This 177-nucleotide RNA was probed chemically with DMS and 2A3. Values cover nucleotides 27 to 126. The 2A3 profile rests on 2,029 reads.
[RMDB]
RNA sequence: GGGAACGACUCGAGUAGAGUCGAAAAGAUAUGGACUGACCCACCGAGAUAGGGUCGGAAACGACCUCUUAUCGAUGAGGUGCAGUCCUAAGUCAAACCAUUAUUAUUUGUUCGCAAAUAAUAAUGGGUGUGUGCUUAUCUUCGGAUAAGCACACACAAAAGAAACAACAACAACAAC
Reactivity to DMS in 0.01 (KOAc 150mM, MgCl2 10mM, bicine 150mM(pH8.5), 24C), signal-to-noise 1, nucleotides 027 to 126: g000a120u010a300u000g010g030a050c010u000g030a090c010c000c000a010c030c020g010a010g000a160u000a110g030g010g000u000c020g030g010a050a140a180c000g040a020c000c000u000c110u000u010a290u000c000g060a010u000g000a230g010g020u040g000c000a010g020u000c000c000u010a000a160g040u000c030a100a100a300c010c000a010u000u000a000u000u000a000u000u000u000g020u000u020c160g000c000a000a040a010u000a000a000u000a000a010u000g000g010
Reactivity to 2A3 in 0.01 (KOAc 150mM, MgCl2 10mM, bicine 150mM(pH8.5), 24C), signal-to-noise 1, nucleotides 027 to 126: g000a000u080a080u140g030g000a000c000u020g000a020c040c030c020a040c000c070g040a040g000a040u300a070g020g000g030u000c060g030g030a080a050a000c010g000a000c000c060u180c020u080u050a000u050c020g070a040u060g060a140g080g090u300g270c020a000g000u000c000c000u030a170a010g020u020c090a060a070a050c030c000a000u000u010a000u000u020a000u000u030u000g070u040u100c300g000c110a000a000a050u000a000a010u000a010a010u020g010g030